RNA sequence: GGGAACGACUCGAGUAGAGUCGAAAACCUUUAGAUGCAGACGAUUAUUCGUAUGCAAUGGCUGCCUAAUUAGCAAAAGUUAAUUAACCAGCCAUCGCUCUUCAGCGGAGGCGCUUACUCCAAGGCUGUUAGAGUGGCAUAAUUCGCGCUUGAGCUCGCCAUGUAUGUCGUUCGCGACAUACAUGGCAAAAGAAACAACAACAACAAC
Reactivity to 2A3 in 0.01 (KOAc 150mM, MgCl2 10mM, bicine 150mM(pH8.5), 24C), signal-to-noise 2, nucleotides 027 to 156: c000c000u070u020u210a160g040a040u060g000c000a010g010a050c000g020a020u070u030a070u300u110c040g000u070a000u020g000c000a030a000u040g010g000c000u000g020c010c010u000a000a000u000u000a000g020c020a020a190a230a080g010u000u000a000a000u000u000a000a030c010c000a000g010c000c000a010u020c040g000c000u000c000u020u050c000a000g000c000g010g000a000g020g040c030g030c070u100u140a090c010u020c020c020a050a070g110g000c040u000g040u160u090a000g000a000g000u010g010g000c000a030u130a190a120u160u080c070g000c010g020c080u080u160g030a040g020c020u070c110
Source information: The record gives the reactivity of an RNA of 207 nucleotides to 2A3. Conditions: 150 mM KOAc, 10 mM MgCl2 and 150 mM bicine (pH 8.5), 24 C.